[RMDB]
RNA sequence: GGGAACGACUCGAGUAGAGUCGAAAACUUGCCAAACGAAUCGAUUGUGGAAUCUUAUAGAAAUUUCGGGAAAGCAGUAGGCUAGCGAAUUUUAGUUCAUAAUCUCGUUUGGCUUACUGGCCCAGUCACCGCGUAGUGACUUCGGUCACUACGCGGUAAAAGAAACAACAACAACAAC
Reactivity to 2A3 in 0.01 (KOAc 150mM, MgCl2 10mM, bicine 150mM(pH8.5), 24C), signal-to-noise 2, nucleotides 027 to 126: c100u040u070g010c040c000a000a000a010c000g050a040a100u220c160g040a000u100u020g070u020g000g080a020a020u040c020u110u150a080u090a300g190a040a120a030u090u070u030c030g000g000g070a140a250a140g050c000a010g130u300a120g270g000c010u010a000g080c000g000a010a000u000u010u010u010a060g020u000u000c050a020u000a070a000u010c000u000c000g000u020u070u000g000g000c000u000u000a000c000u010g000g020c000c000c000a000g040u130c040